Background: An RNA of 177 nucleotides, treated with DMS and read out base by base. For DMS the reverse transcriptase was MarathonRT. The reactions ran in a buffer of 150 mM KOAc, 10 mM MgCl2 and 150 mM bicine (pH 8.5), at 24 C. Reactivities are rounded to 0.1 and cut off at 0 and 3. The DMS profile rests on 2,118 reads.

RNA sequence: GGGAACGACUCGAGUAGAGUCGAAAAAAAAAGAUAUGGAGGAGCGUAAAGCCUUGGAUUUAUACACGAAACUCGGAAACGAGUAGUAGUGUAUUGUCAGGCUUUGAUCUCCUCCUAAGUCAAAAAAGUAUAUACUGCAGUUCGCUGCAGUAUAUACAAAAGAAACAACAACAACAAC
Reactivity to DMS in 0.01 (KOAc 150mM, MgCl2 10mM, bicine 150mM(pH8.5), 24C), signal-to-noise 2, nucleotides 027 to 126: a070a090a060a070a050g000a010u000a300u000g000g000a010g010g000a010g000c170g020u000a010a000a010g000c010c000u010u010g020g000a020u000u000u000a000u000a010c000a000c010g010a070a130a130c000u000c010g010g020a120a090a120c010g000a010g010u000a030g000u000a130g000u000g010u000a000u000u000g010u030c020a020g000g020c000u000u000u000g000a060u010c000u000c000c000u000c000c000u000a000a050g010u000c000a020a040a070a030a080a070